[RMDB]
RNA sequence: GGGAACGACUCGAGUAGAGUCGAAAAAGAGGGAUCCCCGGGGAAACCUACGCGAGCGAGGCGGAGAUCGAGCGCCAGUUCGAGCGCGGCUACCUGAAGUUGCUUCGGCUUCUUCUUGUUCGCUUCCUGCUUGGAACGGCUCCUUCUUCACACCAGCGAACUCAGUGUAGUUCGCUACACUGAGUUCAAAAGAAACAACAACAACAAC
Reactivity to DMS in 0.01 (KOAc 150mM, MgCl2 10mM, bicine 150mM(pH8.5), 24C), signal-to-noise 1, nucleotides 027 to 156: a060g020a100g000g010g030a170u010c020c010c010c050g010g030g000g000a120a050a070c000c010u000a060c070g040c030g020a090g010c020g000a060g010g010c050g030g040a110g000a100u000c030g010a100g020c000g010c110c030a070g020u020u000c010g020a090g030c000g040c120g000g000c040u010a050c040c000u020g030a050a120g030u000u010g000c030u020u000c280g020g020c040u000u000c010u000u000c010u010u010g010u000u020c100g030c030u000u000c000c030u020g020c060u000u000g000g010a030a050c000g000g000c040u000c000c040u000u020c020u000u000c000a080c050a030c050c030a300g000c060
Reactivity to 2A3 in 0.01 (KOAc 150mM, MgCl2 10mM, bicine 150mM(pH8.5), 24C), signal-to-noise 4, nucleotides 027 to 156: a000g110a040g020g050g020a050u030c020c010c010c010g020g000g010g030a070a080a070c050c050u120a100c150g040c070g090a050g010c030g010a010g040g000c030g020g000a010g010a030u030c030g010a000g010c020g090c160c020a050g010u020u030c010g010a010g000c030g000c040g030g000c010u010a020c000c000u010g010a010a000g020u020u040g010c000u030u080c270g100g000c010u000u000c000u000u000c000u000u040g080u120u100c070g000c000u060u070c030c070u130g020c000u010u030g050g000a020a020c000g010g020c000u000c000c000u010u010c000u020u010c010a030c010a030c030c020a020g050c020
Chemical mapping of a 207-nucleotide RNA with DMS and 2A3. It was measured as part of the RMDB library VIROID. Reactivities are given for positions 27 through 156.